[RMDB]
RNA sequence: GGGAACGACUCGAGUAGAGUCGAAAAGAUAUGGAAGAGACAGAGGUAACUACAACUAUUCGGAAACGAACGAAUUGUAGCUACCGACGAAGUCUCUUCCUAAGUCAAACUGAUCUUCGGAUCAGAACGAAAGUACUAACUUCGGUUAGUACUUUCGAAAAGAAACAACAACAACAAC
Reactivity to DMS in 0.01 (KOAc 150mM, MgCl2 10mM, bicine 150mM(pH8.5), 24C), signal-to-noise 4, nucleotides 027 to 126: g000a050u010a300u000g020g020a000a010g010a010g000a000c000a020g000a170g000g010u000a000a000c000u000a020c000a010a020c110u010a300u000u000c000g000g000a140a090a180c020g000a010a030c090g010a040a080u000u000g000u000a000g010c030u000a000c020c000g010a130c230g010a050a070g000u000c000u000c000u000u000c010c000u000a010a070g010u000c050a090a110a170c010u000g000a000u000c000u010u000c140g030g000a020u000c000a010g000a060a130
Reactivity to 2A3 in 0.01 (KOAc 150mM, MgCl2 10mM, bicine 150mM(pH8.5), 24C), signal-to-noise 2, nucleotides 027 to 126: g030a020u060a020u140g000g000a000a010g010a000g010a010c030a020g030a020g050g010u020a030a010c000u020a000c000a020a030c080u080a040u010u030c000g070g000a090a070a050c020g030a040a010c040g070a240a300u020u010g000u010a000g020c030u020a000c010c030g060a020c000g010a010a030g010u000c000u000c000u000u000c000c000u010a010a000g000u000c010a010a040a180c010u000g000a000u000c010u040u090c300g100g000a010u000c020a010g020a060a020
The record gives the reactivity of an RNA of 177 nucleotides to DMS and 2A3. Conditions: 150 mM KOAc, 10 mM MgCl2 and 150 mM bicine (pH 8.5), 24 C. Source: RMDB library TTRDEL, as collected in RNAgym. 2A3 is a SHAPE reagent: it acylates the 2'-hydroxyl of flexible nucleotides of all four kinds. In probing experiments dimethyl sulfate is read out at A N1 and C N3, which are open when not base-paired. 2A3 adducts were read by reverse transcription with SuperScript II with manganese.